[RMDB]
Overview
This 177-nucleotide RNA was probed chemically with 2A3 and DMS. For 2A3 the reverse transcriptase was SuperScript II with manganese. The data come from the RNA Mapping Database (RMDB), library OK2TRN. For 2A3, 12,858 sequencing reads were counted.

RNA sequence: GGGAACGACUCGAGUAGAGUCGAAAAAGCGCGGGUUGGCGAUACCGGCCGCCAAUGCGUUCACCGCCGUCGCCGGGCACGGGGUGCGGGCGCAGGUCAACGGCGGGCCGGUGGUGGUCGGACGGCGGCUAGUACUGAUUUUCGAAUCAGUACUAGCAAAAGAAACAACAACAACAAC
Reactivity to 2A3 in 0.01 (KOAc 150mM, MgCl2 10mM, bicine 150mM(pH8.5), 24C), signal-to-noise 5, nucleotides 027 to 126: a000g080c080g010c040g020g070g010u080u100g050g010c030g020a020u060a070c010c000g010g000c020c000g000c020c010a030a070u110g040c030g020u080u070c090a110c040c000g110c020c010g030u040c030g010c080c040g050g110g000c050a020c030g140g010g010g030u120g050c050g020g040g000c010g000c020a060g040g110u120c070a060a020c050g010g000c000g000g000g030c000c010g000g000u000g000g010u020g000g010u020c020g020g020a040c010g010g040c010g020
Reactivity to DMS in 0.01 (KOAc 150mM, MgCl2 10mM, bicine 150mM(pH8.5), 24C), signal-to-noise 7, nucleotides 027 to 126: a080g010c040g010c020g000g010g020u000u010g010g010c040g000a160u000a070c020c010g010g010c010c000g010c000c000a080a080u000g010c030g010u010u000c050a110c020c000g010c000c020g020u000c100g010c030c050g020g020g020c100a040c020g010g010g010g030u010g020c100g010g000g010c020g010c080a050g010g010u010c170a100a090c130g000g010c010g010g010g010c100c000g000g010u000g000g020u000g010g010u000c020g000g010a060c060g010g010c060g000